RNA sequence: GGGAACGACUCGAGUAGAGUCGAAAACGGCUGAACCUUGCGCUGACGCUUAAGCAGGGCGGCAAUCUCAUCCUGCUUGAUGAGCCGACCAACGACCUCGAUGUCGAGACCUUGGGUUCGCUGGAGAUCGCAGGAGGGGAUUCGUCCCCUCCUGCGAAAAAGAAACAACAACAACAAC
Reactivity to 2A3 in 0.01 (KOAc 150mM, MgCl2 10mM, bicine 150mM(pH8.5), 24C), signal-to-noise 1, nucleotides 027 to 126: c040g020g010c080u130g010a130a120c000c030u080u100g030c050g080c100u170g060a050c050g000c060u020u040a000a050g000c010a020g000g030g010c000g030g100c200a100a140u010c010u000c080a010u000c000c000u020g050c050u020u020g030a050u090g020a010g000c000c010g040a030c030c050a150a050c000g050a030c000c020u070c060g120a170u290g030u060c000g010a030g040a100c000c080u050u050g060g000g000u040u090c030g000c050u000g140g000a040g010a020
Reactivity to DMS in 0.01 (KOAc 150mM, MgCl2 10mM, bicine 150mM(pH8.5), 24C), signal-to-noise 1, nucleotides 027 to 126: c030g000g000c010u020g010a150a080c040c020u000u000g030c050g050c120u010g020a080c110g000c060u000u000a090a020g040c020a040g010g000g000c200g020g020c210a110a080u010c260u000c010a050u000c000c040u020g000c050u000u000g000a060u020g030a000g000c030c020g010a130c050c120a090a190c040g000a080c090c010u000c090g000a100u060g000u000c040g000a030g010a090c010c030u000u010g000g020g000u020u010c010g010c050u000g000g010a080g000a090